[RMDB]
This 177-nucleotide RNA was probed chemically with 2A3 and DMS. It was measured as part of the RMDB library TTRDEL. DMS adducts were read by reverse transcription with MarathonRT.
RNA sequence: GGGAACGACUCGAGUAGAGUCGAAAAGAUAUGGACCGAACUACAGCGACAACAGCGAAGAACUCGGAAACGAGGGAGCUGCUAAUCGCUGCGGUCCUAAGUCAAAACGCAACCUUCGGGUUGCGAACGAUUUUGGAUAGUUCGCUAUCCAAAAUCGAAAAGAAACAACAACAACAAC
Reactivity to 2A3 in 0.01 (KOAc 150mM, MgCl2 10mM, bicine 150mM(pH8.5), 24C), signal-to-noise 2, nucleotides 027 to 126: g010a000u040a030u110g010g010a000c030c000g000a080a030c090u250a060c290a000g000c020g060a010c000a220a000c000a010g040c000g230a300a040g000a100a030c000u000c000g000g000a120a010a040c000g010a010g000g000g000a020g000c000u010g000c040u120a110a060u030c000g000c010u000g010c020g000g000u030c000c000u000a070a010g040u010c010a020a040a050a140c010g000c000a000a000c010c000u040u080c270g090g000g000u010u000g010c020g010a010a000
Reactivity to DMS in 0.01 (KOAc 150mM, MgCl2 10mM, bicine 150mM(pH8.5), 24C), signal-to-noise 2, nucleotides 027 to 126: g020a030u010a300u000g000g010a030c030c020g010a030a040c040u050a300c010a010g020c010g040a040c080a080a110c010a020g000c010g040a090a110g000a080a130c010u000c000g000g000a080a150a180c000g000a030g000g000g000a050g020c000u000g000c050u020a120a200u000c010g000c000u000g000c010g000g000u000c000c010u000a010a060g020u000c010a080a110a130a180c040g000c010a010a000c000c010u000u020c140g000g030g010u010u000g020c000g000a010a040
For DMS, 1,211 sequencing reads were counted.